[RMDB]
RNA sequence: GGGAACGACUCGAGUAGAGUCGAAAAGCCAGACGCAGGAGAUGGAUGGCUCAGCAGUAAUCGUGCUGCUUGAGCUUGGUGUCUAAUGGGGACAGUAGUGACAGGAAGUUCACAGGGACUGGAAGACAUGAGUUCUCUGAGGGAAAGGAAGGUGAAAUCAUCCCUGCAUAUUCGUAUGCAGGGAUGAAAAAGAAACAACAACAACAAC
Reactivity to 2A3 in 0.01 (KOAc 150mM, MgCl2 10mM, bicine 150mM(pH8.5), 24C), signal-to-noise 2, nucleotides 027 to 156: g010c000c030a040g010a070c040g000c030a000g020g040a040g020a030u040g050g090a050u050g040g000c000u010c010a000g030c000a010g020u090a010a250u230c150g220u180g030c010u020g000c010u030u170g010a000g000c000u000u020g020g040u030g000u000c010u000a100a080u120g010g030g000g030a000c010a010g100u100a000g040u020g070a020c040a020g050g110a060a030g030u030u030c030a040c040a050g050g000g030a060c040u040g010g060a050a000g030a010c040a080u190g020a030g020u140u020c030u000c020u100g020a020g000g010g020a070a010a080g010g030a040a000g000g000u050g050a010a030a130
Reactivity to DMS in 0.01 (KOAc 150mM, MgCl2 10mM, bicine 150mM(pH8.5), 24C), signal-to-noise 2, nucleotides 027 to 156: g000c030c010a100g020a080c060g020c070a040g030g030a080g030a070u000g010g000a210u010g010g020c010u010c010a020g020c000a020g040u000a060a180u010c290g010u000g020c020u010g000c010u000u020g010a020g010c000u000u000g010g030u000g000u020c030u000a060a110u010g010g010g010g020a090c040a100g010u000a090g020u000g040a080c080a090g020g020a110a110g020u000u000c010a120c060a080g020g030g030a070c030u020g010g010a110a060g040a090c080a060u000g010a090g000u000u000c020u010c030u000g000a080g030g030g020a060a060a100g000g000a080a040g040g030u000g000a050a080a160